The data come from the RNA Mapping Database (RMDB), library OK2TRN.
The record gives the reactivity of an RNA of 177 nucleotides to DMS and 2A3.
The RNA was probed in 150 mM KOAc, 10 mM MgCl2 and 150 mM bicine (pH 8.5) at 24 C.
RNA sequence: GGGAACGACUCGAGUAGAGUCGAAAACAACAAUUCGCACCCCGAUCUUAAUCAGUCGUGGAUUGAGGACAUCUCUUUUGUGCACUCAUAUGUUCUGACUCCUGCCCAAUUAGGGGGACUGAGUAACGUAUCGCAGAGUGUUCGCACUCUGCGAUACAAAAGAAACAACAACAACAAC
Reactivity to DMS in 0.01 (KOAc 150mM, MgCl2 10mM, bicine 150mM(pH8.5), 24C), signal-to-noise 2, nucleotides 027 to 126: c130a050a120c170a070a180u010u000c130g020c130a140c070c000c020c040g010a070u000c110u000u000a070a050u000c050a030g010u000c010g010u020g050g010a020u000u000g020a010g010g000a040c060a030u000c140u000c110u000u000u010u000g020u000g010c210a030c120u000c100a100u000a040u000g000u000u000c020u000g000a010c010u010c010c010u000g010c030c010c010a060a180u030u000a130g030g040g000g000g020a050c070u000g020a080g060u010a030a100c210
Reactivity to 2A3 in 0.01 (KOAc 150mM, MgCl2 10mM, bicine 150mM(pH8.5), 24C), signal-to-noise 2, nucleotides 027 to 126: c030a000a010c000a020a110u210u120c080g040c050a050c020c000c010c000g040a050u000c020u070u130a110a030u030c020a000g000u030c010g170u120g000g020a030u000u040g040a010g000g000a030c020a120u020c030u030c000u140u150u140u120g090u030g060c120a060c040u120c020a120u120a020u140g020u030u060c030u030g070a010c010u000c020c030u110g010c000c030c000a100a230u150u190a120g040g010g010g000g020a000c030u020g000a000g000u050a150a000c060